[RMDB]
RNA sequence: GGGAACGACUCGAGUAGAGUCGAAAAGGUGGUUAAGCAUGCUAGGUGGAGGUAUGACCUGUGACCACCGAAACAGGUCAUUUGCCGAAGGUGGGAACGCGAAAGCGAAAGCAUGCUUACCACCGAAGGGUUUGCUAUCCUUCGGGAUAGCAAACCCAAAAGAAACAACAACAACAAC
Reactivity to 2A3 in 0.01 (KOAc 150mM, MgCl2 10mM, bicine 150mM(pH8.5), 24C), signal-to-noise 1, nucleotides 027 to 126: g020g020u000g010g010u150u080a000a000g000c000a000u050g000c000u000a040g020g170u040g040g070a060g000g030u040a000u000g000a000c000c010u000g000u010g060a150c020c070a030c070c030g000a010a010a010c000a000g000g000u000c010a020u110u000u120g050c000c060g040a070a030g160g170u250g020g110g070a060a120c000g000c000g070a140a070a060g000c000g000a020a020a000g000c000a000u000g020c000u000u000a000c000c000a000c000c000g000a000a000